[RMDB]
RNA sequence: GGGAACGACUCGAGUAGAGUCGAAAAGGAAAGGUGCUGACGUGGGCCACUGCCGCUUCGCUGGGAAGCAAUGGGCCCAGCUAGGCCCGGGGCGCGGCCACACCCCUGUGGGGGAGGGGAAGGAGGCAUUGUCAGAAUGGUUCGCCAUUCUGACAAUAAAAGAAACAACAACAACAAC
Reactivity to DMS in 0.01 (KOAc 150mM, MgCl2 10mM, bicine 150mM(pH8.5), 24C), signal-to-noise 2, nucleotides 027 to 126: g000g010a110a100a130g000g000u010g030c070u010g000a070c170g020u010g000g000g000c000c000a070c060u010g000c120c140g000c020u000u000c080g000c180u000g000g010g010a060a010g000c030a100a080u010g000g000g010c000c000c020a000g020c090u000a150g020g000c000c040c000g000g010g000g000c060g000c110g000g030c030c020a030c060a140c010c020c010c030u010g030u000g010g000g000g000g000a060g010g000g000g010a090a070g000g000a120g010g000c110